[RMDB]
RNA sequence: GGGAACGACUCGAGUAGAGUCGAAAACUCUGAGUCUUCGGACUCAGAGAAACGCUUUCGACUCUGAUACCAACAAAGGCGAGUUUGUUGGUAUAAUCGCAAAAAGGUGGGAGUUCGCUCCCACCAAGUUAUACAUGAACUUCGGUUCAUGUAUAACAAAAGAAACAACAACAACAAC
Reactivity to 2A3 in 0.01 (KOAc 150mM, MgCl2 10mM, bicine 150mM(pH8.5), 24C), signal-to-noise 5, nucleotides 027 to 126: c000u000c000u000g010a000g000u000c010u030u130c270g100g000a000c000u000c000a010g000a000g000a010a020a000c090g040c090u010u010u010c010g000a000c000u000c000u000g020a010u000a010c000c010a000a000c000a010a030a010g260g060c150g110a130g080u010u010u010g000u000u010g000g010u000a010u020a020a060u030c020g020c120a050a060a030a050a090g000g000u010g000g000g000a010g010u050u070c170g040c060u010c000c010c000a000c000c000a000a000
Reactivity to DMS in 0.01 (KOAc 150mM, MgCl2 10mM, bicine 150mM(pH8.5), 24C), signal-to-noise 7, nucleotides 027 to 126: c000u000c000u000g010a010g010u000c000u000u010c200g030g000a010c000u000c000a010g000a010g000a030a060a050c300g010c210u000u000u000c000g000a010c000u000c000u000g010a040u000a000c000c000a010a010c000a010a010a030g010g020c200g010a130g010u000u000u000g010u000u000g000g000u000a000u000a030a050u000c020g020c220a060a070a060a070a070g000g020u000g000g010g010a010g010u000u010c210g000c000u000c000c000c000a000c000c010a000a010